[RMDB]
RNA sequence: GGGAACGACUCGAGUAGAGUCGAAAAACAACACGCUUCGGCGUGUUGUCGACGGAGGAAGCUGAGGACGCGCUUGUGCCGCAGCAGGGAACCGCAGCGUAAAUCAGAGGUGAUUCGUCACCUCUAAUACUGAUCAUAGCUUCGGCUAUGAUCAGUAAAAAGAAACAACAACAACAAC
Reactivity to 2A3 in 0.01 (KOAc 150mM, MgCl2 10mM, bicine 150mM(pH8.5), 24C), signal-to-noise 1, nucleotides 027 to 126: a000c000a000a000c040a010c000g000c000u010u050c110g190g000c030g030u020g010u020u010g000u000c010g010a040c020g060g010a020g000g030a110a000g030c040u030g030a020g110g040a080c010g090c020g050c110u110u110g090u140g050c020c020g050c010a040g070c050a000g070g020g000a050a000c030c000g000c040a020g010c030g100u150a050a050a070u090c060a020g000a010g000g010u010g010a020u000u090c140g030u040c050a000c000c000u040c010u000a000a000
Reactivity to DMS in 0.01 (KOAc 150mM, MgCl2 10mM, bicine 150mM(pH8.5), 24C), signal-to-noise 2, nucleotides 027 to 126: a020c010a000a000c000a010c010g000c010u000u050c150g030g030c000g040u010g000u000u000g000u000c040g000a100c050g020g000a140g000g020a270a120g020c010u010g000a010g010g010a070c080g010c190g010c240u000u010g010u020g010c010c040g000c040a020g000c050a020g010g000g010a120a100c010c030g000c050a080g010c070g010u010a040a070a060u020c190a010g000a020g000g030u000g000a030u010u010c230g010u000c000a010c010c000u010c010u000a020a080